[RMDB]
RNA sequence: GGGAACGACUCGAGUAGAGUCGAAAACUUGCCAUUCACUAGUAGUUAGCGUUUAAUAACAGCAUGUUAUUGAACGGUGACCUUCCUACAGAGGACUUUCACCUCAUUAGUUCAUGCCCAUGCUGGGGAACUUGGUUUCAUUCGUGAAACCAAGUUCAAAAGAAACAACAACAACAAC
Reactivity to 2A3 in 0.01 (KOAc 150mM, MgCl2 10mM, bicine 150mM(pH8.5), 24C), signal-to-noise 2, nucleotides 027 to 126: c030u050u120g010c010c010a090u100u120c020a090c110u050a060g060u010a020g030u130u030a050g060c050g020u030u010u060a090a080u060a100a020c020a010g120c050a050u110g000u010u060a020u030u010g010a000a010c030g020g030u000g010a010c000c010u070u010c000c000u040a120c070a160g260a060g050g030a060c040u060u080u000c080a060c010c010u030c040a110u060u120a030g030u010u030c020a020u020g050c040c000c000a030u060g040c040u060g000g040g100
Reactivity to DMS in 0.01 (KOAc 150mM, MgCl2 10mM, bicine 150mM(pH8.5), 24C), signal-to-noise 3, nucleotides 027 to 126: c070u010u010g010c060c030a120u030u040c080a040c090u010a080g010u000a120g000u000u000a050g000c040g010u030u010u000a020a040u000a020a040c010a130g050c230a090u030g020u000u000a050u000u000g000a010a000c020g010g000u000g010a010c100c060u010u000c050c040u000a070c300a170g000a040g020g000a120c210u000u000u020c110a050c020c010u000c100a080u000u010a060g020u000u010c070a070u030g010c190c300c010a060u010g010c050u010g040g010g020